[RMDB]
RNA sequence: GGGAACGACUCGAGUAGAGUCGAAAACACGGCGACUGGCCGGCCGCACCCGCUGCUGGUGCGGCUGAUGGGCAGGCUGCCAGCAGAGGUUCUUGACAAGUUCUACGGCUGCGGCGCGCCUGUGCCGCACCUAGGCACACUUCGGUGUGCCUAGGUGAAAAGAAACAACAACAACAAC
Reactivity to DMS in 0.01 (KOAc 150mM, MgCl2 10mM, bicine 150mM(pH8.5), 24C), signal-to-noise 8, nucleotides 027 to 126: c050a180c060g000g010c010g020a300c070u010g010g000c040c020g010g000c000c000g000c010a020c010c000c070g010c200u020g020c150u000g020g010u000g010c000g010g010c000u000g000a070u000g010g000g020c010a030g000g000c010u010g010c060c010a070g040c030a020g010a300g000g010u000u000c020u000u010g010a140c230a120a180g000u000u000c010u000a150c100g010g010c030u000g010c010g000g010c020g010c120g010c030c010u000g030u000g010c000c010g000
Reactivity to 2A3 in 0.01 (KOAc 150mM, MgCl2 10mM, bicine 150mM(pH8.5), 24C), signal-to-noise 5, nucleotides 027 to 126: c030a010c010g010g040c040g200a300c200u090g100g070c020c000g010g030c000c000g000c000a010c020c010c000g220c280u230g000c140u120g000g010u000g000c010g000g000c000u000g000a020u040g000g010g010c000a000g000g030c010u040g010c030c010a030g000c010a000g030a020g010g050u040u050c020u070u150g040a050c040a130a060g010u030u000c020u100a060c050g220g000c030u010g000c000g010g000c030g000c050g010c030c020u020g020u070g050c000c000g000
An RNA of 177 nucleotides, treated with DMS and 2A3 and read out base by base. Values are in units of 0.01, from 0 to 300, in steps of 10. The RNA was probed in 150 mM KOAc, 10 mM MgCl2 and 150 mM bicine (pH 8.5) at 24 C. For DMS the reverse transcriptase was MarathonRT.